Structure probing data (2A3 and DMS) for a 177-nucleotide construct. 2A3 adducts were read by reverse transcription with SuperScript II with manganese. The RNA was probed in 150 mM KOAc, 10 mM MgCl2 and 150 mM bicine (pH 8.5) at 24 C.
RNA sequence: GGGAACGACUCGAGUAGAGUCGAAAAAAGAUAUGGACCUACCGAAUCGUGAACUACGAUCGGGUAGAGUCGGAAACGACUCUAUCUCUAGCGUGUCGCACGCAACAGCUGUAGGUCCUAAGUCAAAUCUUAAAUCUUUGUUCGCAAAGAUUUAAGAAAAAGAAACAACAACAACAAC
Reactivity to 2A3 in 0.01 (KOAc 150mM, MgCl2 10mM, bicine 150mM(pH8.5), 24C), signal-to-noise 6, nucleotides 027 to 126: a000a010g020a010u020a010u060g000g000a000c010c000u000a000c020c030g060a060a080u060c020g020u030g130a300a100c070u140a030c270g090a060u150c130g030g010g000u000a000g000a010g000u000c000g000g010a010a010a000c000g000a000c020u000c010u010a010u010c120u030c080u100a060g030c030g010u070g260u300c220g070c280a010c010g000c020a040a120c010a120g020c020u080g000u000a000g010g000u000c000c000u000a030a000g000u010c010a030a020a260
Reactivity to DMS in 0.01 (KOAc 150mM, MgCl2 10mM, bicine 150mM(pH8.5), 24C), signal-to-noise 7, nucleotides 027 to 126: a090a100g000a020u000a070u020g000g000a010c000c000u000a010c000c060g010a090a080u000c010g020u000g000a160a110c200u010a050c010g010a040u000c300g000g000g010u000a000g000a020g020u000c000g010g000a020a020a060c000g010a010c000u000c000u010a000u000c010u000c220u010a190g010c030g020u000g010u020c240g010c050a030c010g000c060a120a100c260a110g010c080u000g020u000a010g010g000u000c000c010u000a000a050g000u000c020a090a110a140